[RMDB]
RNA sequence: GGGAACGACUCGAGUAGAGUCGAAAAGAUAUGGAAUGCUAAGGGAGCUGGCUCGGAAACGAGUCAGCAUCGAUCUUACAUUCCUAAGUCAAAGACGUACCAAAAACUUCGGUUUUUGGUACGUCAAGAUAUAGGAACGCUUCGGCGUUCCUAUAUCAAAAGAAACAACAACAACAAC
Reactivity to DMS in 0.01 (KOAc 150mM, MgCl2 10mM, bicine 150mM(pH8.5), 24C), signal-to-noise 3, nucleotides 027 to 126: g010a040u000a300u010g010g000a000a000u000g010c300u010a000a000g010g000g000a030g060c000u000g010g010c000u000c000g010g000a060a080a160c000g000a020g030u000c010a000g010c010a040u010c150g000a050u000c000u010u000a020c010a010u000u000c010c000u000a010a090g000u010c030a100a070a100g000a010c000g020u000a000c000c000a020a000a010a010a000c000u000u010c200g020g000u000u000u000u010u000g010g000u000a000c010g000u000c010a000a020
Reactivity to 2A3 in 0.01 (KOAc 150mM, MgCl2 10mM, bicine 150mM(pH8.5), 24C), signal-to-noise 1, nucleotides 027 to 126: g020a000u050a030u120g010g000a020a000u020g040c080u120a010a020g020g050g000a000g030c010u010g020g000c010u000c000g020g030a040a060a030c010g000a000g030u000c000a010g010c000a020u030c010g030a020u030c000u000u010a000c000a010u010u010c010c000u020a190a040g060u010c030a140a000a080g010a000c020g010u000a000c000c000a010a000a000a000a000c020u080u180c300g090g000u020u010u010u000u040g000g000u000a000c000g000u000c000a010a000